[RMDB]
RNA sequence: GGGAACGACUCGAGUAGAGUCGAAAAGGUCUUUACAGAGGGACAAUUGACAUUACAGUAAAUCUCAUGGACGACGAAUCAACGGAAUCAGCACCACAGGUUUGGGAUCACUUCAAUACCAGAUAUGCCUCGACUACGCGUUCGCGCGUAGUCGAGGAAAAGAAACAACAACAACAAC
Reactivity to 2A3 in 0.01 (KOAc 150mM, MgCl2 10mM, bicine 150mM(pH8.5), 24C), signal-to-noise 1, nucleotides 027 to 126: g100g040u200c090u000u130u080a010c110a080g020a090g030g000g140a000c080a110a020u000u090g030a060c040a060u000u120a010c140a070g090u240a000a020a070u040c000u000c000a030u000g000g000a000c060g000a000c000g000a000a000u040c000a000a080c170g010g000a150a040u110c000a000g000c030a060c000c000a000c060a040g030g030u130u150u030g090g000g000a000u080c000a060c110u000u000c000a110a020u030a000c000c000a020g000a050u130a000u200g120